[RMDB]
RNA sequence: GGGAACGACUCGAGUAGAGUCGAAAAACAACGAGGGACGCUGACGCGAAAGCGUGGUCUAGCGAACCAAUUAGGCUGCUUGAUGCGGCCAAUUGCUGACAGAAAAGCUACCUUAGGGAUAACAGAGAAUUGAUACGACUUUCGAGUCGUAUCAAUUAAAAGAAACAACAACAACAAC
Reactivity to DMS in 0.01 (KOAc 150mM, MgCl2 10mM, bicine 150mM(pH8.5), 24C), signal-to-noise 6, nucleotides 027 to 126: a070c090a090a100c100g020a020g000g010g000a240c170g030c010u000g000a020c030g010c030g010a110a070a080g000c000g020u000g020g000u000c020u010a060g010c100g010a100a120c250c060a040a050u030u000a110g010g000c000u000g010c010u010u020g020a120u040g000c000g010g020c000c000a000a000u010u000g000c040u000g000a030c050a100g010a110a080a120a040g000c010u010a190c010c010u000u000a080g000g010g010a110u010a080a090c110a070g000a190g030
Reactivity to 2A3 in 0.01 (KOAc 150mM, MgCl2 10mM, bicine 150mM(pH8.5), 24C), signal-to-noise 6, nucleotides 027 to 126: a000c070a020a030c070g020a030g010g000g020a020c090g000c030u040g020a000c000g010c030g090a140a050a010g040c010g010u050g020g030u030c030u100a010g020c000g060a030a040c050c000a000a000u020u020a070g000g000c000u010g000c020u070u220g150a130u300g050c000g000g000c000c000a000a000u020u000g000c010u020g020a050c010a040g150a040a070a010a010g000c000u010a020c000c000u030u040a060g010g050g020a080u100a150a030c030a030g130a010g060

The record gives the reactivity of an RNA of 177 nucleotides to DMS and 2A3. Conditions: 150 mM KOAc, 10 mM MgCl2 and 150 mM bicine (pH 8.5), 24 C. 2A3 adducts were read by reverse transcription with SuperScript II with manganese.